Description
The record gives the reactivity of an RNA of 177 nucleotides to DMS and 2A3. The RNA was probed in 150 mM KOAc, 10 mM MgCl2 and 150 mM bicine (pH 8.5) at 24 C. The 2A3 profile rests on 3,326 reads.
[RMDB]
RNA sequence: GGGAACGACUCGAGUAGAGUCGAAAACACACAUGUGCACACACAGAGGAAGCCAAGGGGGCAGAAGAGGAGCCAGGUGAUCAGUCUGCUGAAUUUACCUUAAUAAAGGUGGUACCAUUUGUGCAACCUGAGCUAAAUCAUUCGUGAUUUAGCUCAGAAAAGAAACAACAACAACAAC
Reactivity to DMS in 0.01 (KOAc 150mM, MgCl2 10mM, bicine 150mM(pH8.5), 24C), signal-to-noise 3, nucleotides 027 to 126: c060a050c120a090c110a060u000g030u000g030c070a040c070a080c080a070c080a090g010a110g000g020a100a090g000c090c050a020a080g020g010g020g010g020c050a040g010a050a050g000a080g010g000a100g010c010c080a020g000g030u000g000a040u000c060a050g000u000c070u000g000c030u000g010a060a050u010u010u010a050c010c010u010u000a070a090u010a050a110a030g010g040u000g010g030u000a060c020c070a090u000u010u000g030u000g020c070a080a100c160
Reactivity to 2A3 in 0.01 (KOAc 150mM, MgCl2 10mM, bicine 150mM(pH8.5), 24C), signal-to-noise 3, nucleotides 027 to 126: c040a000c000a000c010a050u130g010u040g050c020a020c020a000c000a000c020a060g060a050g070g060a080a010g040c010c030a070a080g060g000g020g000g000c010a010g030a160a020g050a040g040g000a020g030c010c010a020g030g020u030g020a050u040c020a010g050u010c030u090g010c010u000g040a020a040u060u110u110a070c010c010u080u040a130a020u130a150a220a000g070g000u030g000g010u030a040c030c000a060u020u060u120g070u030g050c000a030a040c000